[RMDB]
RNA sequence: GGGAACGACUCGAGUAGAGUCGAAAAAAUUGUUGCAGGUGCUGAUAAUUGGUCUCGGAAAAAAACACGCCGAUUGUUAGUGAUAACGGGAUUAUUUAGUAGUAAUGUUGAUGAUGAUACUACAAAACUAUCCUAGUGGUUUCGACCACUAGGAUAGAAAAGAAACAACAACAACAAC
Reactivity to DMS in 0.01 (KOAc 150mM, MgCl2 10mM, bicine 150mM(pH8.5), 24C), signal-to-noise 2, nucleotides 027 to 126: a090a020u010u010g030u000u000g000c060a100g030g030u000g020c030u010g010a050u000a030a060u000u000g000g010u000c030u000c110g000g000a000a000a080a130a080a000a050c040a070c260g000c100c040g020a080u000u000g010u000u000a040g020u000g000a110u010a040a070c040g010g000g020a050u000u000a070u010u000u000a090g000u000a020g000u000a060a060u010g000u010u020g020a050u010g000a080u000g010a080u010a060c000u000a050c080a060a040a060a150